[RMDB]
Overview
An RNA of 207 nucleotides, treated with 2A3 and read out base by base. Reactivities are given for positions 27 through 156. For 2A3 the reverse transcriptase was SuperScript II with manganese. It was measured as part of the RMDB library OK3TST.

RNA sequence: GGGAACGACUCGAGUAGAGUCGAAAAAUACCUAGUAAGAAUGCUUACCAAACAGCAACUUGGUAUCAGAUAUUAAACUGGAAUGAUGCUCUCAAUAAGGACAGACAUAUUGAGGUAGGCAAAACGGAAUGGAAAUUCGAGGAUAUCAUAUUUUCGGACUUACCCCGUUGUUCGCAACGGGGUAAGUAAAAGAAACAACAACAACAAC
Reactivity to 2A3 in 0.01 (KOAc 150mM, MgCl2 10mM, bicine 150mM(pH8.5), 24C), signal-to-noise 1, nucleotides 027 to 156: a000u000a000c000c000u000a010g000u130a300a000g080a170a150u050g040c000u030u030a070c040c040a070a070a050c040a000g000c020a000a080c040u000u000g000g000u040a000u160c150a050g170a010u050a010u120u300a300a260a020c000u030g050g030a000a120u110g070a030u080g040c050u040c000u000c140a000a000u070a130a000g290g120a170c030a070g120a070c030a110u050a030u010u010g000a010g050g190u170a080g040g000c000a020a020a020a020c120g090g000a090a000u090g010g120a000a250a000u030u030c050g010a000g010g030a000u010a040u080c150a060u150a080u280u060u040u000c000g030g000